[RMDB]
RNA sequence: GGGAACGACUCGAGUAGAGUCGAAAAGUGGUCGAGUGCGAAGCACUGGGGUAGAGAAAUAAAGAGAAAGAGAUCUUCCCCGUCAGUCAGUCACUCUCUGUCUGAAUCUCUCUCUCAAAGACCACGAAUACCGGAGGGACUUCGGUCCCUCCGGUAUAAAAGAAACAACAACAACAAC
Reactivity to 2A3 in 0.01 (KOAc 150mM, MgCl2 10mM, bicine 150mM(pH8.5), 24C), signal-to-noise 1, nucleotides 027 to 126: g060u000g000g000u000c000g070a000g040u040g060c200g110a260a090g000c020a000c040u020g000g030g000g010u030a010g000a030g060a140a050a000u240a030a260a000g100a000g080a000a150a000g000a000g000a030u010c020u060u030c000c000c030c000g000u000c000a000g000u000c000a000g050u090c010a130c090u040c020u030c000u000g060u030c000u020g020a130a140u060c030u000c000u000c000u000c000u000c020a000a090a000g000a000c000c000a000c000g000a030
Reactivity to DMS in 0.01 (KOAc 150mM, MgCl2 10mM, bicine 150mM(pH8.5), 24C), signal-to-noise 1, nucleotides 027 to 126: g000u000g000g000u000c030g040a040g030u000g000c040g010a170a170g120c000a000c000u000g000g000g000g010u000a060g000a100g000a010a090a020u070a100a190a040g010a030g000a110a080a060g010a060g030a000u010c150u000u050c000c000c000c050g020u100c100a060g030u010c070a120g010u010c100a110c030u030c020u010c000u000g000u010c060u010g000a160a100u000c130u040c000u000c040u010c000u000c040a060a080a030g000a040c010c050a000c060g060a150